An RNA of 207 nucleotides, treated with 2A3 and read out base by base. Reactivities are given for positions 27 through 156. Conditions: 150 mM KOAc, 10 mM MgCl2 and 150 mM bicine (pH 8.5), 24 C.
[RMDB]
RNA sequence: GGGAACGACUCGAGUAGAGUCGAAAAAGCGCAUCACUUUCGUGGUUGGCACGGUGGCGGGUGAGCAGCCGCUGCCGUUCAUCCUGACCGGCGGCCAGCACAUUCGCCUGUGGGCGCGCGUCAACGACGACGCCGACACGGCCGGAAUCACCGACGGCGCUAAGCCCAUAUUCGUAUGGGCUUAGCGAAAAGAAACAACAACAACAAC
Reactivity to 2A3 in 0.01 (KOAc 150mM, MgCl2 10mM, bicine 150mM(pH8.5), 24C), signal-to-noise 2, nucleotides 027 to 156: a000g060c110g000c050a110u070c020a030c060u080u220u180c100g010u040g010g100u030u100g040g010c050a060c030g000g080u030g000g040c030g010g000g010u030g060a070g010c060a000g000c010c010g000c000u010g030c030c000g020u010u010c010a060u040c000c070u090g030a070c010c010g040g000c020g000g030c050c100a090g000c050a000c000a110u020u000c010g000c010c000u020g000u020g000g060g020c030g000c110g000c000g050u050c040a170a100c230g060a000c040g000a010c010g010c010c000g010a020c000a040c070g020g010c050c000g040g020a040a060u070c030a000c020c010g070a040c000g000g010